[RMDB]
RNA sequence: GGGAACGACUCGAGUAGAGUCGAAAAGCUUUUCGAAUCCACCUUCCACCUGCUCCAACAUGUGUAUCCUCUGGUACGCGGUGAAGGCGGAAUUGUUGGCCAGCAGCCGUCCGUUCCAGUACCAGUAGGUGAGGUAUUAUUUCGAUAAUACCUCACCAAAAGAAACAACAACAACAAC
Reactivity to 2A3 in 0.01 (KOAc 150mM, MgCl2 10mM, bicine 150mM(pH8.5), 24C), signal-to-noise 3, nucleotides 027 to 126: g040c000u100u090u050u090c040g040a060a040u000c020c000a030c040c000u070u010c020c020a030c000c010u050g010c010u020c020c010a060a040c030a100u150g060u010g030u160a100u110c000c020u060c010u030g000g010u020a020c020g010c110g030g020u090g050a060a040g010g010c020g000g050a030a040u090u070g050u030u090g090g070c050c040a030g010c010a000g010c020c010g040u040c000c010g070u110u010c010c010a000g000u020a020c000c000a020g040u070a050
Reactivity to DMS in 0.01 (KOAc 150mM, MgCl2 10mM, bicine 150mM(pH8.5), 24C), signal-to-noise 5, nucleotides 027 to 126: g010c090u000u000u000u000c050g010a120a070u000c040c030a090c050c040u000u010c040c020a080c050c020u000g010c030u010c040c040a070a100c110a070u000g010u010g010u000a090u000c030c050u000c020u000g000g010u000a010c010g020c130g020g000u000g010a070a100g010g010c000g010g010a050a060u010u010g010u000u010g010g010c060c030a120g000c040a090g000c010c020g000u000c030c050g000u000u000c000c010a170g010u000a020c020c010a030g000u000a060

This 177-nucleotide RNA was probed chemically with 2A3 and DMS. The RNA was probed in 150 mM KOAc, 10 mM MgCl2 and 150 mM bicine (pH 8.5) at 24 C. High 2A3 reactivity points to a flexible backbone, as in loops and unpaired stretches. The DMS profile rests on 8,128 reads. Values cover nucleotides 27 to 126. Source: RMDB library OK2TST, as collected in RNAgym.